[RMDB]
RNA sequence: GGGAACGACUCGAGUAGAGUCGAAAAUUGUUCCCCUUCGUCCUCUCCUCGUCUCGGAUUGGCUCAUUCUCAGGUCGGGCGAGGGUCCUCAGUUCUCUCUAUUCUUUCUUUUUGAAAGAGGAGACUGCUAUAGUGAUAUGUUCGCAUAUCACUAUAGAAAAGAAACAACAACAACAAC
Reactivity to 2A3 in 0.01 (KOAc 150mM, MgCl2 10mM, bicine 150mM(pH8.5), 24C), signal-to-noise 8, nucleotides 027 to 126: u080u100g010u020u020c000c010c000c000u060u110c040g050u030c000c020u050c020u030c000c000u010c010g050u020c060u050c100g060g010a070u020u050g040g010c040u040c050a190u250u020c070u020c040a030g020g030u020c010g020g000g000c010g000a010g010g010g000u010c000c010u020c000a050g010u190u030c020u000c000u000c020u070a200u200u030c000u060u030u010c010u080u290u120u160u230g010a010a010a000g000a000g000g000a000g000a000c000u020g000
Reactivity to DMS in 0.01 (KOAc 150mM, MgCl2 10mM, bicine 150mM(pH8.5), 24C), signal-to-noise 6, nucleotides 027 to 126: u010u010g000u000u000c010c010c000c190u000u010c090g010u000c040c030u000c080u000c010c010u000c020g020u010c020u010c060g020g010a110u010u000g010g000c140u010c170a130u000u010c080u000c050a120g010g000u000c030g010g000g020c020g010a030g000g000g000u000c030c020u000c020a030g010u000u000c040u000c000u010c110u010a180u010u000c000u000u000u000c000u000u000u010u010u010g010a010a010a010g000a060g010g000a020g000a040c060u000g000
The record gives the reactivity of an RNA of 177 nucleotides to 2A3 and DMS. Conditions: 150 mM KOAc, 10 mM MgCl2 and 150 mM bicine (pH 8.5), 24 C. For DMS the reverse transcriptase was MarathonRT. The DMS profile rests on 12,755 reads.